Conditions: 150 mM KOAc, 10 mM MgCl2 and 150 mM bicine (pH 8.5), 24 C. This 177-nucleotide RNA was probed chemically with DMS and 2A3. The 2A3 profile rests on 1,498 reads. The data come from the RNA Mapping Database (RMDB), library M2PK50.
RNA sequence: GGGAACGACUCGAGUAGAGUCGAAAACCUGACACGUUCGCGUGUCAGGAAAGGUCGCUCCGAGAAAUACGCUGGCGUCGCGACGGACGCGACGCUAGCGUAAAACGCCCGACUUCGGUCGGGCGAAGAUCAUUCUUACGUUCGCGUAAGAAUGAUCAAAAGAAACAACAACAACAAC
Reactivity to DMS in 0.01 (KOAc 150mM, MgCl2 10mM, bicine 150mM(pH8.5), 24C), signal-to-noise 1, nucleotides 027 to 126: c000c000u020g010a010c000a010c000g010u010u020c160g050c010g050u000g020u000c010a000g000g000a010a060a090g010g000u000c010g010c020u030c000c000g010a140g010a050a150a090u010a000c020g030c010u000g000g010c010g010u000c000g010c000g100a250c300g000g000a240c020g000c010g020a010c000g000c020u000a000g030c000g020u010a000a030a160a180c040g020c010c000c000g020a030c000u000u020c120g010g030u000c010g000g000g000c010g010a020a020
Reactivity to 2A3 in 0.01 (KOAc 150mM, MgCl2 10mM, bicine 150mM(pH8.5), 24C), signal-to-noise 1, nucleotides 027 to 126: c000c000u000g000a000c000a000c020g060u080u080c200g010c000g080u010g010u010c010a000g010g030a050a010a010g040g000u040c030g000c010u030c030c030g050a040g110a130a150a020u070a010c020g000c010u000g020g010c040g010u050c020g050c000g110a150c150g220g110a070c090g000c000g010a040c000g000c000u000a000g000c000g010u000a000a000a000a020c020g010c000c000c000g000a010c000u030u040c170g130g000u010c000g000g000g000c000g000a000a000